Description:
Conditions: 150 mM KOAc, 10 mM MgCl2 and 150 mM bicine (pH 8.5), 24 C. Chemical mapping of a 177-nucleotide RNA with DMS and 2A3. For DMS the reverse transcriptase was MarathonRT. The data come from the RNA Mapping Database (RMDB), library M2PK50. For DMS, 986 sequencing reads were counted.

[RMDB]
RNA sequence: GGGAACGACUCGAGUAGAGUCGAAAAGCCGAAGAGUUCGCUCUUCGGCGACGAAUUUGGCGUAGAUGAGAGUCUACAGUACUAGCCAUCCCAGAAGUACAAAUAAGCAUUGCUUCGGCAAUGCUAACACUGUUCAAAGCUUCGGCUUUGAACAGUGAAAAGAAACAACAACAACAAC
Reactivity to DMS in 0.01 (KOAc 150mM, MgCl2 10mM, bicine 150mM(pH8.5), 24C), signal-to-noise 2, nucleotides 027 to 126: g000c000c000g000a020a000g040a020g010u000u020c250g010c000u000c000u000u000c000g010g000c000g000a020c210g000a120a110u010u020u000g000g000c030g020u000a050g000a000u000g000a300g000a260g000u000c000u000a000c040a120g020u000a010c030u010a300g010c000c000a080u000c000c000c000a250g000a060a070g030u000a030c020a090a010a110u030a130a060g030c000a000u000u000g000c000u010u000c160g030g000c010a020a030u000g000c000u000a000a130
Reactivity to 2A3 in 0.01 (KOAc 150mM, MgCl2 10mM, bicine 150mM(pH8.5), 24C), signal-to-noise 2, nucleotides 027 to 126: g000c000c010g000a000a010g000a010g070u140u150c220g030c170u000c010u000u010c000g000g070c000g000a010c010g070a070a200u200u090u210g010g020c010g000u010a000g000a030u030g020a020g000a000g060u010c000u000a010c020a020g010u000a000c010u020a020g000c000c000a050u000c010c010c010a000g050a080a000g010u020a000c040a030a110a050u250a160a000g030c010a020u000u020g000c010u010u050c100g010g000c000a000a000u000g000c000u010a000a000